[RMDB]
RNA sequence: GGGAACGACUCGAGUAGAGUCGAAAACCGUAGGGAUUCCUACCCACCUCGAUUACAGGCUUGGAUUUAGGAUCUUCGAAAGAGGAUCCUUGUCAGCCUGGAUCGAGAGGGAAUCCCUAAACGGAAACGUCACCUUAGCUUCGGCUAAGGUGACGAAUACUAUAGUGCCGUUCGCGGCACUAUAGUAAAAAGAAACAACAACAACAAC
Reactivity to DMS in 0.01 (KOAc 150mM, MgCl2 10mM, bicine 150mM(pH8.5), 24C), signal-to-noise 1, nucleotides 027 to 156: c000c000g000u000a030g010g010g000a010u000u010c000c010u000a000c000c010c080a300c150c000u000c010g000a050u000u000a180c010a010g020g010c010u010u010g020g010a090u000u010u010a010g060g010a000u000c010u000u000c000g010a140a160a300g000a070g010g000a010u010c000c000u000u020g050u010c000a070g010c020c000u010g010g000a010u000c010g010a010g000a110g040g010g010a020a020u000c000c000c000u000a000a000a050c010g000g000a090a010a090c020g010u010c010a040c010c000u010u000a000g030c010u000u030c300g020g060c000u020a000a000g000g000u000g000a000c010g010a070a050
Reactivity to 2A3 in 0.01 (KOAc 150mM, MgCl2 10mM, bicine 150mM(pH8.5), 24C), signal-to-noise 3, nucleotides 027 to 156: c030c010g000u020a010g000g010g000a010u000u010c020c010u060a260c030c070c030a070c020c010u000c000g000a040u040u140a300c030a010g000g020c000u250u300g170g000a070u300u180u060a010g000g000a000u010c010u030u000c010g050a080a030a000g010a010g010g000a000u040c000c000u000u020g000u000c000a010g000c010c000u010g000g010a000u000c000g000a000g000a000g000g000g000a000a000u000c000c000c000u000a030a010a000c000g040g040a110a080a000c020g010u020c000a000c020c000u030u000a000g000c000u070u060c300g120g000c000u000a000a000g000g000u000g000a000c000g000a000a000

About this RNA:
Chemical mapping of a 207-nucleotide RNA with DMS and 2A3. It was measured as part of the RMDB library RNAMAK. For 2A3, 2,338 sequencing reads were counted. Values are in units of 0.01, from 0 to 300, in steps of 10.